[RMDB]
RNA sequence: GGGAACGACUCGAGUAGAGUCGAAAACGAAAACUGAAACGGAUUGAAUACCAGGACGAAACCAAACCUGGUUGGAACAGAUUGGAGUAUGUGACCGACAGGAAUGAACUGCUGGUUUCCAUCGGUCCUAAUUAAAUGGCUUCGGCCAUUUAAUUAGAAAAGAAACAACAACAACAAC
Reactivity to 2A3 in 0.01 (KOAc 150mM, MgCl2 10mM, bicine 150mM(pH8.5), 24C), signal-to-noise 3, nucleotides 027 to 126: c010g050a010a000a000a070c030u120g050a130a030a000c050g070g040a090u090u120g110a130a040u060a080c000c000a000g010g050a040c100g130a150a070a020c080c000a040a030a040c000c010u000g000g010u010u000g010g010a040a030c020a030g090a130u100u120g030g010a050g050u090a050u220g120u090g020a050c000c000g000a000c030a080g000g030a070a040u090g040a090a070c040u150g080c040u080g130g000u030u020u010c010c010a020u010c010g010g000u000c020
Reactivity to DMS in 0.01 (KOAc 150mM, MgCl2 10mM, bicine 150mM(pH8.5), 24C), signal-to-noise 8, nucleotides 027 to 126: c050g010a130a060a090a090c070u000g000a090a100a100c110g010g000a110u010u010g000a140a080u010a020c010c000a000g010g010a090c110g010a100a110a160c110c100a040a080a140c020c010u000g010g010u000u010g000g020a240a100c090a050g000a130u010u010g010g010a130g020u000a050u010g010u010g000a020c010c010g010a030c060a090g010g000a060a060u000g010a080a090c080u000g020c090u010g010g010u000u000u000c020c020a220u000c010g000g000u000c030